[RMDB]
RNA sequence: GGGAACGACUCGAGUAGAGUCGAAAACUCACUGUUCAUCGAUGGCAAGCGCUGCGAGGGUGCGGCGGGUACUUUUGCGACCGUCAACCCGGCCACCGAGGAAACGCUCGGCGUGGCGGCCGAUGCCGGGACGUAUGCACUUCGGUGCAUACGUCCCAAAAGAAACAACAACAACAAC
Reactivity to 2A3 in 0.01 (KOAc 150mM, MgCl2 10mM, bicine 150mM(pH8.5), 24C), signal-to-noise 1, nucleotides 027 to 126: c030u000c010a010c040u010g060u090u080c010a000u080c100g020a060u060g030g000c000a060a060g100c000g000c020u020g010c000g090a060g060g000g000u050g050c050g000g060c070g020g060g010u300a290c020u120u180u120u020g040c000g000a080c000c060g000u000c040a000a000c040c000c040g030g010c000c000a000c000c080g110a060g080g020a110a300a000c150g040c190u090c050g020g000c010g040u030g060g000c060g130g020c000c000g060a000u050g040c000c030

This 177-nucleotide RNA was probed chemically with 2A3. It was measured as part of the RMDB library OK1LIB.